[RMDB]
RNA sequence: GGGAACGACUCGAGUAGAGUCGAAAACGUAACCUCAAGCAGGAUCAGGCUUGAAGGCGAAUUUCUCGACUUGAAGGGAAGCUACAAUGUUCAGGCAACGGGCUCUUGUCCAAAUGGUUACAUGGACGCCUACUAGCAGGUUCGCCUGCUAGUAGGCAAAAGAAACAACAACAACAAC
Reactivity to 2A3 in 0.01 (KOAc 150mM, MgCl2 10mM, bicine 150mM(pH8.5), 24C), signal-to-noise 2, nucleotides 027 to 126: c000g040u000a010a010c010c010u040c030a030a030g010c030a040g060g200a180u170c050a030g150g080c010u010u040g020a050a010g040g030c040g020a040a020u040u040u010c080u000c000g090a110c040u010u120g080a090a040g070g010g010a030a020g000c020u130a060c060a130a150u240g050u050u020c020a000g070g020c030a060a040c060g010g010g050c050u040c010u020u060g040u040c020c010a000a090a080u120g040g010u050u040a040c020a060u090g100g010a020c060
Reactivity to DMS in 0.01 (KOAc 150mM, MgCl2 10mM, bicine 150mM(pH8.5), 24C), signal-to-noise 1, nucleotides 027 to 126: c090g000u010a060a050c000c000u000c080a070a010g040c010a120g020g000a030u010c190a130g000g030c000u010u000g010a030a070g020g000c080g010a070a170u030u000u000c000u000c050g030a100c110u000u010g010a100a170g020g030g010a050a080g000c040u000a060c100a100a140u000g000u000u000c060a010g000g000c040a040a060c110g010g010g010c090u000c070u010u000g000u030c000c030a000a060a090u010g000g030u000u010a040c070a120u010g000g000a130c100

Chemical mapping of a 177-nucleotide RNA with 2A3 and DMS. For DMS the reverse transcriptase was MarathonRT. The RNA was probed in 150 mM KOAc, 10 mM MgCl2 and 150 mM bicine (pH 8.5) at 24 C.